Source information:
Chemical mapping of a 177-nucleotide RNA with 2A3. Source: RMDB library OK1LIB, as collected in RNAgym.
RNA sequence: GGGAACGACUCGAGUAGAGUCGAAAAGAAUAAGCAAAAAUGUGAUCUUGCUUGUAAAUACGAUUUUGAGAGGUUAAUUAAUUACAAGUAGUGCUAUUUUUGUCUCUCUCUGCAAUAACGAACCGAACCGUCAUCGUGAGUUCGCUCACGAUGACGGAAAAGAAACAACAACAACAAC
Reactivity to 2A3 in 0.01 (KOAc 150mM, MgCl2 10mM, bicine 150mM(pH8.5), 24C), signal-to-noise 1, nucleotides 027 to 126: g020a090a100u110a010a000g000c000a000a000a000a010a000u130g140u060g020a300u030c080u020u030g110c000u000u000g000u000a000a000a000u220a090c090g030a130u080u080u000u000g110a120g000a000g000g130u160u300a000a000u000u050a090a050u030u000a000c000a000a000g000u000a020g150u070g150c000u140a140u080u000u000u000u160g110u000c040u000c000u000c000u000c000u160g170c000a000a120u110a030a090c060g120a000a000c040c030g020a000a000